[RMDB]
RNA sequence: GGGAACGACUCGAGUAGAGUCGAAAAGUACGUAGAGUGUCGGCAAGCUCUAUAUAUGGACACUUACGAAGCGUUUUGGUUGUUUUGUAUCUCAAGCCGACUUUGAGUAUUUGAGGAAAAUACGACAUGAAUCCUGUGACGUUCGCGUCACAGGAAAGAUUAGUCGAAUGUUCGCAUUCGACUAAUCAAAAGAAACAACAACAACAAC
Reactivity to DMS in 0.01 (KOAc 150mM, MgCl2 10mM, bicine 150mM(pH8.5), 24C), signal-to-noise 2, nucleotides 027 to 156: g080u000a020c020g000u000a000g010a080g040u000g010u010c100g040g030c090a150a300g000c030u000c010u000a050u000a060u010a040u000g000g010a150c060a040c000u010u000a100c120g000a040a040g010c020g020u010u010u000u000g020g050u010u000g000u010u000u000u000g020u000a040u010c100u000c040a070a130g010c010c020g020a070c070u020u000u000g010a290g020u000a010u000u000u020g000a130g030g000a110a050a020a040u000a070c040g000a180c050a050u000g000a120a220u000c000c010u010g050u010g010a010c000g040u010u010c280g030c050g000u000c010a010c010a000g000g000a010a000a020
Reactivity to 2A3 in 0.01 (KOAc 150mM, MgCl2 10mM, bicine 150mM(pH8.5), 24C), signal-to-noise 3, nucleotides 027 to 156: g050u050a010c070g000u010a000g020a010g090u030g030u070c050g040g070c100a160a070g070c060u060c050u050a090u020a020u000a020u160g110g040a020c030a020c100u130u100a050c090g060a060a030g070c030g030u050u030u140u210g090g010u010u000g040u000u040u010u030g050u020a120u050c070u000c080a050a030g000c020c020g020a040c000u060u070u070g030a010g020u050a050u020u070u050g030a080g010g110a000a020a070a020u090a030c050g040a050c040a060u210g090a110a090u010c000c000u020g010u000g000a000c000g030u040u070c170g030c000g120u010c000a000c000a000g000g020a000a000a000